[RMDB]
Structure probing data (DMS) for a 177-nucleotide construct.
RNA sequence: GGGAACGACUCGAGUAGAGUCGAAAAGUUUUUAACGCGUGUGCACCCGCUAACACGAAUUACCCAGUUAUUUUCGACUUUACUCGACUCGUUAUAGCGUGAGUUGGCGGAGUUCUCCGCGAAAUAACUGGACACGAUAAUUCGUUAUCGUGUCCAGAAAAGAAACAACAACAACAAC
Reactivity to DMS in 0.01 (KOAc 150mM, MgCl2 10mM, bicine 150mM(pH8.5), 24C), signal-to-noise 1, nucleotides 027 to 126: g020u010u000u000u020u010a040a030c220g000c010g030u000g000u020g010c070a100c020c030c060g000c060u020a060a010c010a020c020g000a080a100u010u010a120c050c060c050a070g020u000u000a040u000u000u000u000c000g010a010c020u000u000u000a000c000u000c020g000a000c050u010c000g000u020u000a050u000a060g000c050g040u010g000a060g000u000u000g020g000c040g000g010a060g020u010u010c100u000c000c000g000c000g000a030a060a050u000a100a170
It was measured as part of the RMDB library M2PK90. The RNA was probed in 150 mM KOAc, 10 mM MgCl2 and 150 mM bicine (pH 8.5) at 24 C.